[RMDB]
The data come from the RNA Mapping Database (RMDB), library OK1LIB. The record gives the reactivity of an RNA of 177 nucleotides to 2A3 and DMS.
RNA sequence: GGGAACGACUCGAGUAGAGUCGAAAAGGCAGGAUUAGAUGGCAUACUGUGUUAGUAUAUGUAUGAUGAGGGGUGCCAUUUUAUCACUAAGUAUGGUCAAUGAUGUCCUCUCUGAAGAAGCAAUGUGCACUGCAGCAGCAUUCGUGCUGCUGCAGUGAAAAGAAACAACAACAACAAC
Reactivity to 2A3 in 0.01 (KOAc 150mM, MgCl2 10mM, bicine 150mM(pH8.5), 24C), signal-to-noise 3, nucleotides 027 to 126: g100g000c030a020g010g020a000u030u050a040g070a130u110g060g010c020a060u070a150c050u010g070u070g040u300u120a030g080u040a090u110a060u210g180u050a110u180g110a010u140g030a060g020g000g000g030u000g050c010c000a000u020u000u000u000a050u010c080a000c060u060a150a030g040u090a180u120g060g000u090c060a020a060u120g070a070u140g070u090c000c000u020c000u000c040u100g040a070a050g130a080a030g070c160a120a140u110g030u050g030
Reactivity to DMS in 0.01 (KOAc 150mM, MgCl2 10mM, bicine 150mM(pH8.5), 24C), signal-to-noise 2, nucleotides 027 to 126: g030g000c030a040g010g000a030u020u000a030g000a060u040g010g050c080a000u000a070c060u000g000u000g000u010u020a070g000u000a050u080a080u030g060u040a050u000g010a090u010g000a070g010g010g000g000u030g030c070c000a000u030u000u000u020a030u010c030a080c110u000a050a100g050u070a070u000g000g020u000c220a030a050u000g000a050u030g000u020c030c000u000c000u010c020u000g000a110a020g010a100a120g000c100a030a040u000g020u000g000

For DMS, 3,409 sequencing reads were counted.